[RMDB]
RNA sequence: GGGAACGACUCGAGUAGAGUCGAAAAAAAAGAUAUGGAGAGUACUACCCACCGUACGUGUCCGUUGAAAGACCAUCGGAAACGAUGGUCUGGAGGACUCGUACGAGGUACUCUCCUAAGUCAAAAAGAUUAUUGUGACGUUCGCGUCACAAUAAUCAAAAGAAACAACAACAACAAC
Reactivity to DMS in 0.01 (KOAc 150mM, MgCl2 10mM, bicine 150mM(pH8.5), 24C), signal-to-noise 1, nucleotides 027 to 126: a010a070a160a010g000a040u010a070u020g000g000a020g020a020g010u000a010c000u000a130c160c030c060a300c030c010g000u010a000c000g010u000g030u000c000c000g000u000u000g050a190a020a080g030a010c020c000a000u020c020g000g010a010a020a020c000g030a030u010g000g000u020c020u000g000g000a010g000g000a000c000u000c010g000u000a020c000g020a020g020g010u000a000c040u000c000u000c000c010u010a000a050g000u060c020a030a110a100a080a160

The data come from the RNA Mapping Database (RMDB), library TTRDES.
An RNA of 177 nucleotides, treated with DMS and read out base by base.
Reactivities are given for positions 27 through 126.
Conditions: 150 mM KOAc, 10 mM MgCl2 and 150 mM bicine (pH 8.5), 24 C.